[RMDB]
RNA sequence: GGGAACGACUCGAGUAGAGUCGAAAAGAUAUGGACCACCGAGACGGAAAAUGAGUGGAGCGAAGAACACAGGGAUCGGAAACGAUCCUGUGGGAGCUCGCAUUUUCCGUCUCGGUGGUCCUAAGUCCUCAACAUAAGAGUUCGCUCUUAUGUUGAGAAAAGAAACAACAACAACAAC
Reactivity to DMS in 0.01 (KOAc 150mM, MgCl2 10mM, bicine 150mM(pH8.5), 24C), signal-to-noise 1, nucleotides 027 to 126: g010a110u010a300u010g010g000a030c000c000a000c010c000g000a000g010a000c020g020g020a020a000a010a000u000g010a040g020u020g010g010a010g040c000g030a110a170g000a140a190c010a010c000a010g010g030g010a030u010c000g000g000a090a100a180c000g010a000u000c010c000u010g000u000g000g020g010a080g010c010u000c010g000c000a030u000u000u000u000c010c000g000u000c000u000c000g010g010u020g000g020u010c000c020u010a010a080g000u000c050